[RMDB]
RNA sequence: GGGAACGACUCGAGUAGAGUCGAAAAAAUAAACUAGAUUCGGCUAUUGACUGGUUGAUUUGUUCAUCGACUACAUUAGGAAUCUUUAAACAGUCAUAUGAGAUAGGUCUUUAAGGUGCACUCAAUGAGGAUUAGUGGAUUUCGAUCCACUAAUCCUAAAAGAAACAACAACAACAAC
Reactivity to DMS in 0.01 (KOAc 150mM, MgCl2 10mM, bicine 150mM(pH8.5), 24C), signal-to-noise 2, nucleotides 027 to 126: a100a060u010a110a100a080c100u010a020g020a070u010u000c010g040g000c040u050a080u000u010g000a090c110u000g000g010u000u000g010a070u020u020u020g010u000u000c110a040u020c040g000a100c060u000a050c140a050u000u020a010g000g000a090a030u000c030u020u010u040a060a090a160c030a100g000u000c050a020u060a120u000g000a110g000a070u040a050g010g000u000c060u000u000u000a060a040g010g010u000g000c190a100c030u000c030a010a050u040g030
Reactivity to 2A3 in 0.01 (KOAc 150mM, MgCl2 10mM, bicine 150mM(pH8.5), 24C), signal-to-noise 2, nucleotides 027 to 126: a000a000u270a000a080a030c110u060a000g050a010u050u030c000g000g120c160u050a030u030u020g020a170c020u060g050g120u000u030g040a000u150u050u150g150u100u240c080a030u020c030g060a030c020u240a000c020a030u060u000a000g020g000a040a030u000c000u040u140u000a070a140a030c060a000g100u040c020a050u120a300u180g010a040g000a000u050a150g010g020u000c090u030u170u100a000a110g000g010u060g050c000a000c020u030c000a050a070u150g020
This 177-nucleotide RNA was probed chemically with DMS and 2A3. The data come from the RNA Mapping Database (RMDB), library OK1LIB. The DMS profile rests on 2,302 reads. Conditions: 150 mM KOAc, 10 mM MgCl2 and 150 mM bicine (pH 8.5), 24 C. 2A3 adducts were read by reverse transcription with SuperScript II with manganese. For 2A3, 576 sequencing reads were counted. Values cover nucleotides 27 to 126.